This 207-nucleotide RNA was probed chemically with 2A3.
For 2A3 the reverse transcriptase was SuperScript II with manganese.
The reactions ran in a buffer of 150 mM KOAc, 10 mM MgCl2 and 150 mM bicine (pH 8.5), at 24 C.
It was measured as part of the RMDB library M2RFPK.
Reactivities are given for positions 27 through 156.
RNA sequence: GGGAACGACUCGAGUAGAGUCGAAAAAGGUACUAUGAAUUGAUGCAAGGUGUGGAGCGACCUUAAACAGUUCUGGUGGUGCUCUGAAUGGAGUGCUCUACUGAGAUUAUAAAAUAGAAGGUAAGCUGAAGGGGAAAUGAGUUCGCUCAUUUCCCAAGAACAAGGAUGCGUUCGCGCAUCCUUGUUCAAAAGAAACAACAACAACAAC
Reactivity to 2A3 in 0.01 (KOAc 150mM, MgCl2 10mM, bicine 150mM(pH8.5), 24C), signal-to-noise 3, nucleotides 027 to 156: a000g060g030u070a040c040u040a050u140g030a030a080u090u050g040a050u080g070c040a010a020g000g000u020g020u040g020g020a010g000c000g030a020c010c000u070u060a060a170a020c020a020g000u010u010c010u040g010g030u050g010g030u020g010c000u010c010u030g150a090a110u260g020g010a030g030u050g010c010u000c000u030a040c030u040g030a010g010a090u090u110a060u150a090a080a050a010u070a040g030a070a000g040g000u050a020a040g010c070u080g090a030a070g010g000g010g000a000a000a000u000g000a000g020u060u100c020g030c040u010c000a000u000u000u000c000c000c000a000a000